[RMDB]
RNA sequence: GGGAACGACUCGAGUAGAGUCGAAAACAAGGCGGCGUCCGGCCCGCGAGCGCGUGAGUCAAACAGCGUGAGACACAGCUCCAGCUCCGACUCGCGGGAAAAAGCCGUGGUGUUGCGGAGCGCCACGACCGUCGUGAAAGUUCGCUUUCACGACGGUAAAAGAAACAACAACAACAAC
Reactivity to 2A3 in 0.01 (KOAc 150mM, MgCl2 10mM, bicine 150mM(pH8.5), 24C), signal-to-noise 2, nucleotides 027 to 126: c050a020a070g080g000c030g010g000c010g040u050c000c020g040g100c000c010c000g000c000g010a010g000c270g020c030g050u300g090a000g100u170c050a060a020a080c030a080g020c030g040u100g100a030g070a060c080a020c030a120g040c050u020c020c030a050g010c000u000c000c030g010a000c000u000c000g010c000g020g000g080a120a000a000a000a010g000c000c010g030u050g030g030u080g000u000u190g020c010g040g000a020g020c020g000c020c000a030c010g000
Reactivity to DMS in 0.01 (KOAc 150mM, MgCl2 10mM, bicine 150mM(pH8.5), 24C), signal-to-noise 1, nucleotides 027 to 126: c120a080a030g000g050c000g030g000c040g060u000c010c060g010g020c000c000c000g000c010g010a010g000c120g000c040g050u090g020a020g010u000c030a030a090a200c300a060g060c040g000u000g050a250g050a040c130a220c140a100g000c030u000c120c190a290g000c000u020c030c030g000a120c000u000c000g000c000g000g040g020a020a020a000a160a000g030c130c000g020u000g000g040u000g000u030u010g000c040g000g000a100g050c000g000c000c000a020c120g020